An RNA of 177 nucleotides, treated with DMS and 2A3 and read out base by base.
RNA sequence: GGGAACGACUCGAGUAGAGUCGAAAAAUAUCUUGCAAUUCAUGGUAACGUUGAAGGACACGUUUUACUUCAGCAGCAACUGCAUAGUGCUCUUCUCCAACGAUUUCAGGUGCCAAGGCACGUGAGCAGUAAGUCAUGGUUUCGACCAUGACUUACUAAAAGAAACAACAACAACAAC
Reactivity to DMS in 0.01 (KOAc 150mM, MgCl2 10mM, bicine 150mM(pH8.5), 24C), signal-to-noise 3, nucleotides 027 to 126: a110u000a040u000c050u000u000g000c010a050a110u000u010c060a100u010g030g030u010a060a120c120g020u010u010g000a080a040g010g010a090c160a110c170g000u010u010u010u000a210c050u010u010c060a040g000c020a100g010c120a070a060c040u000g000c050a050u010a030g020u010g010c060u000c080u000u000c020u010c010c080a070a050c130g000a090u000u020u000c040a060g020g020u000g000c020c080a070a120g010g000c020a020c020g010u000g010a040g010c240
Reactivity to 2A3 in 0.01 (KOAc 150mM, MgCl2 10mM, bicine 150mM(pH8.5), 24C), signal-to-noise 3, nucleotides 027 to 126: a010u110a030u040c010u010u080g030c010a040a150u100u070c030a060u170g060g050u100a050a070c060g020u020u020g020a030a000g060g030a010c040a020c230g050u050u060u180u170a070c010u030u040c010a020g000c010a010g020c030a060a060c040u030g000c020a040u060a130g050u040g050c010u010c000u030u000c030u030c010c010a050a060c060g060a080u040u100u110c030a010g060g030u010g000c050c010a060a150g030g000c000a000c080g100u010g030a040g040c080
Source information: Values cover nucleotides 27 to 126. For DMS, 2,749 sequencing reads were counted. For 2A3, 3,039 sequencing reads were counted. The RNA was probed in 150 mM KOAc, 10 mM MgCl2 and 150 mM bicine (pH 8.5) at 24 C.